[RMDB]
RNA sequence: GGGAACGACUCGAGUAGAGUCGAAAAUGGAAGUGCCUUUCUUGAACUGGACUGGUUUGUGCGUGAAGAACAUCAAUCAUCCCAGUUCAGGGGGCGCUUUCUUUAUUUCGACACGCCGCUACCCGCCCAUCUAGUAAUCGUUCGCGAUUACUAGAUGAAAAGAAACAACAACAACAAC
Reactivity to DMS in 0.01 (KOAc 150mM, MgCl2 10mM, bicine 150mM(pH8.5), 24C), signal-to-noise 4, nucleotides 027 to 126: u000g020g000a000a000g020u000g020c000c000u000u010u040c000u010u020g000a010a010c010u000g010g010a160c130u000g010g010u000u010u010g010u000g000c060g030u000g040a210a240g010a150a080c000a010u010c270a020a010u000c000a010u010c040c000c000a000g000u000u000c000a010g010g000g000g000g000c010g000c000u000u000u000c000u000u020u010a060u010u000u000c010g000a050c020a170c070g030c100c040g010c030u000a110c000c000c010g020c090c060
Reactivity to 2A3 in 0.01 (KOAc 150mM, MgCl2 10mM, bicine 150mM(pH8.5), 24C), signal-to-noise 9, nucleotides 027 to 126: u060g000g000a000a000g010u010g010c000c000u100u300u290c020u060u080g000a000a000c000u000g000g020a010c020u010g010g030u010u020u040g030u020g030c100g040u130g110a070a060g060a100a030c000a010u040c020a000a010u010c000a010u040c020c000c000a000g000u000u000c000a000g000g000g000g000g000c000g000c000u010u020u000c000u000u030u020a120u000u010u020c010g010a000c010a010c070g040c010c000g020c020u050a080c010c000c000g030c010c020